[RMDB]
Chemical mapping of a 177-nucleotide RNA with 2A3 and DMS.
RNA sequence: GGGAACGACUCGAGUAGAGUCGAAAAUCAAGCGUACAACUUCGAUGUAAGAGAGCUCCUAGUCUCUCUUACUCGAAGUCUCUCUCUUUGAGUAAGUUCCUGGGAGGAGGUAUUGAAGUUGUACGAAGAUUGUAGGCUCAUUCGUGAGUUUACAAUCAAAAGAAACAACAACAACAAC
Reactivity to 2A3 in 0.01 (KOAc 150mM, MgCl2 10mM, bicine 150mM(pH8.5), 24C), signal-to-noise 9, nucleotides 027 to 126: u100c020a030a020g080c000g010u010a000c000a000a000c000u000u000c000g010a010u050g020u070a080a030g050a010g000a010g070c000u070c030c050u060a050g070u020c010u000c000u000c000u030u000a000c000u000c010g010a000a000g000u000c000u000c000u000c000u000c000u010u040u110g000a010g000u020a090a020g020u040u040c000c000u000g010g000g000a010g010g020a020g020g020u070a030u020u060g010a020a000g000u000u000g000u010a000c010g000a020a010
Reactivity to DMS in 0.01 (KOAc 150mM, MgCl2 10mM, bicine 150mM(pH8.5), 24C), signal-to-noise 8, nucleotides 027 to 126: u030c120a100a120g010c030g010u010a020c070a030a020c000u000u000c000g010a010u020g010u010a030a030g000a040g000a040g010c030u010c170c150u040a080g000u030c020u000c020u010c000u000u000a000c000u000c070g000a050a040g000u010c040u000c030u020c030u000c000u010u010u040g000a060g000u020a070a110g000u020u010c060c010u000g000g000g000a020g000g000a030g020g000u010a080u010u000g000a010a080g010u000u000g000u000a030c020g010a100a100
DMS adducts were read by reverse transcription with MarathonRT. For 2A3, 31,248 sequencing reads were counted. Reactivities are given for positions 27 through 126.